Chemical mapping of a 207-nucleotide RNA with 2A3 and DMS.
For DMS the reverse transcriptase was MarathonRT.
The RNA was probed in 150 mM KOAc, 10 mM MgCl2 and 150 mM bicine (pH 8.5) at 24 C.
Source: RMDB library OK3TST, as collected in RNAgym.
High DMS reactivity at an A or C suggests that its Watson-Crick edge is free.
[RMDB]
RNA sequence: GGGAACGACUCGAGUAGAGUCGAAAAUUACCCGUUUAAAUCCGGUAAGUACACGGCGUCAAAGGCUGCGGAUCAAAGUGCCUGAGGCACCAGUGGCAAAAGUUCAAAAAAAGCAGUCAGAUUAGCCUUCUCUCUCGCUACUACUAAGAAAGGGCCGUAAUUGGCAUUAAUUCGUUAAUGCCAAUUAAAAAGAAACAACAACAACAAC
Reactivity to 2A3 in 0.01 (KOAc 150mM, MgCl2 10mM, bicine 150mM(pH8.5), 24C), signal-to-noise 2, nucleotides 027 to 156: u070u010a060c030c000c010g020u130u140u010a090a130a060u050c000c000g050g000u050a050a030g010u030a080c080a020c070g010g000c010g040u080c090a180a010a040g030g000c020u030g020c070g040g010a040u040c060a070a150a050g040u010g030c000c010u120g040a160g010g010c020a010c020c020a050g030u030g060g010c010a000a030a030a090g040u110u120c060a120a120a030a030a000a040a000g010c040a000g020u030c030a020g010a130u050u070a010g000c000c000u020u040c050u000c000u000c010u020c030g020c010u010a040c000u030a000c020u060a140a010g040a160a060a050g110g030g000c010c010g030
Reactivity to DMS in 0.01 (KOAc 150mM, MgCl2 10mM, bicine 150mM(pH8.5), 24C), signal-to-noise 2, nucleotides 027 to 156: u000u000a090c010c000c010g020u000u000u000a050a160a100u000c050c010g020g010u000a040a100g000u010a070c020a100c050g020g010c030g000u000c040a090a190a070g020g010c020u010g020c000g060g010a130u000c060a080a080a120g010u000g020c020c000u010g000a300g010g030c020a000c020c010a080g020u010g010g020c040a060a070a100a130g020u000u010c050a000a010a090a070a110a080a150g010c030a030g020u000c020a140g010a160u000u000a060g020c020c010u000u000c040u000c040u000c040u020c040g010c050u000a050c090u000a110c030u000a080a070g000a030a050a090g000g000g000c050c000g010